[RMDB]
RNA sequence: GGGAACGACUCGAGUAGAGUCGAAAACAUAUUGAAAGCACAAAGUUUAGACAAUAUGCCUUCGGAUUGAGCUAAAUUCGUUUCUCAUUUAGGGAGCAGGAGAGGAGGAUCUGAACUUGAGGGUGGCCACCCGUAGUCGUUUCGACGACUACGGGUGAAAAGAAACAACAACAACAAC
Reactivity to DMS in 0.01 (KOAc 150mM, MgCl2 10mM, bicine 150mM(pH8.5), 24C), signal-to-noise 2, nucleotides 027 to 126: c000a010u000a040u000u000g010a110a080a110g000c070a110c090a150a120a140g020u000u000u000a070g000a260c010a020a050u000a030u000g000c050c020u000u000c020g000g000a030u030u000g000a130g010c120u000a060a020a080u000u010c060g000u020u010u000c010u010c060a170u010u000u010a100g000g010g030a060g010c080a090g010g000a090g010a120g010g000a050g000g020a060u010c040u000g000a060a060c040u000u010g010a080g000g020g020u000g000g010c090
Reactivity to 2A3 in 0.01 (KOAc 150mM, MgCl2 10mM, bicine 150mM(pH8.5), 24C), signal-to-noise 1, nucleotides 027 to 126: c000a000u090a030u150u080g030a020a120a000g060c020a020c080a170a120a050g040u070u060u090a060g090a040c010a020a030u040a020u080g000c040c000u040u050c030g000g070a080u080u000g060a070g070c050u090a050a030a060u070u040c040g000u040u060u030c050u000c000a070u140u080u010a070g030g040g020a020g000c030a030g020g060a070g020a020g050g080a020g000g050a050u040c010u060g040a030a030c020u050u080g000a050g060g070g000u030g030g000c040
Source: RMDB library OK2TST, as collected in RNAgym. Chemical mapping of a 177-nucleotide RNA with DMS and 2A3. The RNA was probed in 150 mM KOAc, 10 mM MgCl2 and 150 mM bicine (pH 8.5) at 24 C. For 2A3 the reverse transcriptase was SuperScript II with manganese.